[RMDB]
Source: RMDB library M2RFOK, as collected in RNAgym. Structure probing data (DMS and 2A3) for a 207-nucleotide construct. DMS adducts were read by reverse transcription with MarathonRT. The 2A3 profile rests on 4,311 reads.

RNA sequence: GGGAACGACUCGAGUAGAGUCGAAAAGCCAGUCAGAGGGCGCUACCAUGCAAACUAGGGUUGGCUACUCUUGCACAGAAUCACCUUUCUAUAAUAACCAGUGCAAGAAGGGUUAUUAUACCAUUUAAAAAUCGUGAAUGCUUCGGCAUUCACGAAAUCAUAAAAAUUAGUUCGCUAAUUUUUAUGAAAAAGAAACAACAACAACAAC
Reactivity to DMS in 0.01 (KOAc 150mM, MgCl2 10mM, bicine 150mM(pH8.5), 24C), signal-to-noise 3, nucleotides 027 to 156: g020c020c020a050g030u000c060a100g000a070g030g010g030c290g020c030u010a120c070c090a080u010g030c010a120a300a230c030u000a070g000g010g020u000u000g010g020c030u010a190c040u000c000u000u000g000c000a040c040a070g010a120a170u000c070a040c040c020u000u000u000c070u010a030u000a030a040u000a030a020c020c000a300g010u000g000c030a080a040g000a060a070g000g020g000u000u010a010u000u000a010u010a100c140c050a120u000u000u000a070a110a100a120a140u000c000g010u000g000a030a010u000g010c020u010u000c300g050g020c000a010u000u000c000a000c000g020a000a020a030
Reactivity to 2A3 in 0.01 (KOAc 150mM, MgCl2 10mM, bicine 150mM(pH8.5), 24C), signal-to-noise 5, nucleotides 027 to 156: g020c010c000a000g010u010c000a010g000a010g060g010g010c000g000c020u120a290c090c090a140u300g000c000a000a030a050c000u010a020g060g000g000u010u010g000g000c000u030a040c000u000c000u000u010g010c000a010c000a020g080a100a100u090c050a230c050c010u100u300u240c100u100a010u000a020a000u000a000a000c000c000a000g000u000g000c000a000a000g000a000a000g000g000g000u010u000a000u020u010a010u010a040c010c030a140u150u260u300a060a160a040a050a070u050c000g000u000g000a000a000u000g000c010u030u040c090g070g000c000a000u000u000c000a000c000g000a000a000a000